RNA sequence: GGGAACGACUCGAGUAGAGUCGAAAAUACGGGCGCAUGGGGCGGAUCGAGCGCCGGCUGGCCAGCGUCGAGAACCUGAACAACCGGCUGUGGGCCUACGUGCGUCAGCAGCACGAUCACGCGUACCCUAGUAACGUGGAUUCGUCCACGUUACUAGAAAAGAAACAACAACAACAAC
Reactivity to DMS in 0.01 (KOAc 150mM, MgCl2 10mM, bicine 150mM(pH8.5), 24C), signal-to-noise 5, nucleotides 027 to 126: u000a080c090g000g010g000c010g010c020a040u000g000g000g000g010c030g030g000a120u020c120g010a170g020c090g000c000c000g000g030c050u010g000g010c080c010a020g010c190g000u000c050g010a180g010a130a070c040c000u000g000a060a050c040a020a040c020c000g000g000c000u000g030u010g000g020g010c020c010u000a080c040g020u000g010c040g010u000c030a020g020c090a110g000c060a060c070g000a090u000c100a080c080g000c050g010u000a140c050c040
Reactivity to 2A3 in 0.01 (KOAc 150mM, MgCl2 10mM, bicine 150mM(pH8.5), 24C), signal-to-noise 3, nucleotides 027 to 126: u100a020c040g010g020g000c000g000c020a030u050g020g000g030g040c050g070g060a090u170c060g050a040g090c040g000c000c000g000g000c000u010g000g000c020c020a010g020c050g080u020c020g020a070g030a220a050c000c010u020g010a040a000c010a000a030c010c010g020g000c070u110g070u120g060g100g030c040c020u130a260c040g010u030g020c010g000u010c000a000g040c020a000g020c000a010c060g070a090u110c050a020c080g020c010g020u120a130c020c000
Overview
This 177-nucleotide RNA was probed chemically with DMS and 2A3. For 2A3, 5,403 sequencing reads were counted.